[RMDB]
An RNA of 177 nucleotides, treated with 2A3 and DMS and read out base by base.

RNA sequence: GGGAACGACUCGAGUAGAGUCGAAAAAAUUCCAAGCCAUUAUCCAGCAAACACUAUAAAAAUGUUUGAACAGUUGAAUUUCAAACAUUUUCAUUUUGUGGAGUGGUGCUUACCAAGUGGUACAGCUUGCGUAAGAACAAUUCGUUGUUCUUACGCAAAAAGAAACAACAACAACAAC
Reactivity to 2A3 in 0.01 (KOAc 150mM, MgCl2 10mM, bicine 150mM(pH8.5), 24C), signal-to-noise 4, nucleotides 027 to 126: a000a000u110u010c010c010a020a000g000c000c010a020u060u080a040u070c000c000a000g070c030a130a050a000c050a030c110u080a040u100a110a020a000a000a000u010g010u000u000u000g000a020a010c020a070g090u150u150g140a130a120u010u020u020c000a000a000a000c000a000u000u000u000u010c020a030u020u010u030u030g070u040g010g000a000g020u010g010g010u080g020c000u000u010a010c010c020a250a110g080u080g230g010u020a060c050a070g030c000u040
Reactivity to DMS in 0.01 (KOAc 150mM, MgCl2 10mM, bicine 150mM(pH8.5), 24C), signal-to-noise 2, nucleotides 027 to 126: a050a110u010u000c020c000a180a100g020c000c000a020u000u030a060u000c000c000a060g060c140a100a050a130c090a020c020u010a010u000a010a000a010a010a000u000g030u000u010u000g000a000a000c280a240g050u050u030g030a140a140u020u000u000c010a000a000a010c000a000u000u000u000u000c110a000u000u010u000u000g030u010g000g010a000g010u000g010g010u000g000c030u000u000a020c020c020a180a080g000u020g000g050u010a040c150a030g000c030u000
The RNA was probed in 150 mM KOAc, 10 mM MgCl2 and 150 mM bicine (pH 8.5) at 24 C. It was measured as part of the RMDB libraries RFM100 and RFMREP.